[RMDB]
About this RNA:
The data come from the RNA Mapping Database (RMDB), library OK2TRN. Structure probing data (2A3 and DMS) for a 177-nucleotide construct.

RNA sequence: GGGAACGACUCGAGUAGAGUCGAAAACAGAGAGUACGAUCCUAGGAUCGUACGUACCGUACACUAGUGAUCACCAUGGGAUCCUAGACUAGCAUCGCUAGUGAUCGCUAGGAUCCAUCGUACUGUCUGACUGGAGCCAGUUCGCUGGCUCCAGUCAAAAAGAAACAACAACAACAAC
Reactivity to 2A3 in 0.01 (KOAc 150mM, MgCl2 10mM, bicine 150mM(pH8.5), 24C), signal-to-noise 1, nucleotides 027 to 126: c040a020g060a030g010a010g050u000a010c000g030a000u020c000c020u040a050g000g060a220u060c110g020u020a010c030g010u030a060c070c150g000u020a010c060a010c010u030a020g010u060g300a090u000c060a030c220c100a100u190g130g000g000a000u000c000c000u000a050g050a100c020u010a010g010c030a300u210c260g030c060u010a000g000u020g130a090u090c120g070c080u010a000g000g040a010u040c020c040a000u010c000g000u010a020c000u000g120u160c030
Reactivity to DMS in 0.01 (KOAc 150mM, MgCl2 10mM, bicine 150mM(pH8.5), 24C), signal-to-noise 1, nucleotides 027 to 126: c070a060g000a030g000a060g040u000a000c020g010a040u000c020c000u000a060g010g000a110u000c140g050u000a000c010g000u020a010c240c070g000u010a040c000a300c000u000a000g020u000g010a020u020c050a170c200c200a080u020g060g010g000a000u000c050c000u000a000g000a140c040u000a000g010c020a150u010c200g010c020u000a050g000u000g000a000u000c210g000c000u000a000g020g000a050u000c040c050a040u000c110g020u000a010c040u000g000u000c020

The DMS profile rests on 1,093 reads. For DMS the reverse transcriptase was MarathonRT.